Source information: This 177-nucleotide RNA was probed chemically with 2A3 and DMS. 2A3 is a SHAPE reagent: it acylates the 2'-hydroxyl of flexible nucleotides of all four kinds. The RNA was probed in 150 mM KOAc, 10 mM MgCl2 and 150 mM bicine (pH 8.5) at 24 C.
RNA sequence: GGGAACGACUCGAGUAGAGUCGAAAAGAAGAAGUUUCCAGUCAUCUUGUGCCACUUCGGUGCGCAGAUGGGCGAGGUGUCCGGUCCCAUGAGUCAAAAGCCGGUAAGAACCUCUGGCCCGAGGUCGCAUUGAGGUAUUUUUCGAAAUACCUCAAUGAAAAGAAACAACAACAACAAC
Reactivity to 2A3 in 0.01 (KOAc 150mM, MgCl2 10mM, bicine 150mM(pH8.5), 24C), signal-to-noise 9, nucleotides 027 to 126: g150a050a000g060a050a020g030u020u030u010c010c010a010g120u070c020a050u010c030u110u150g030u070g090c090c010a040c020u080u060c120g050g000u070g000c060g000c040a030g040a210u090g000g010g040c030g020a030g000g020u030g040u020c010c000g020g050u090c060c030c030a110u170g070a050g120u120c050a060a080a040a030g010c000c000g010g020u060a080a050g070a060a030c000c010u010c040u090g120g000c010c000c010g020a040g010g030u030c020g000
Reactivity to DMS in 0.01 (KOAc 150mM, MgCl2 10mM, bicine 150mM(pH8.5), 24C), signal-to-noise 9, nucleotides 027 to 126: g010a090a090g000a090a130g010u000u000u000c010c030a190g000u020c060a040u000c030u010u010g020u000g010c110c040a030c020u000u030c110g020g010u010g000c040g010c020a020g010a030u010g000g010g020c040g000a080g010g010u010g010u010c010c010g000g000u010c020c020c040a120u020g000a100g010u010c080a070a080a140a160g010c010c010g000g000u020a090a110g000a130a040c000c010u000c010u020g010g010c020c010c020g000a030g010g010u010c130g010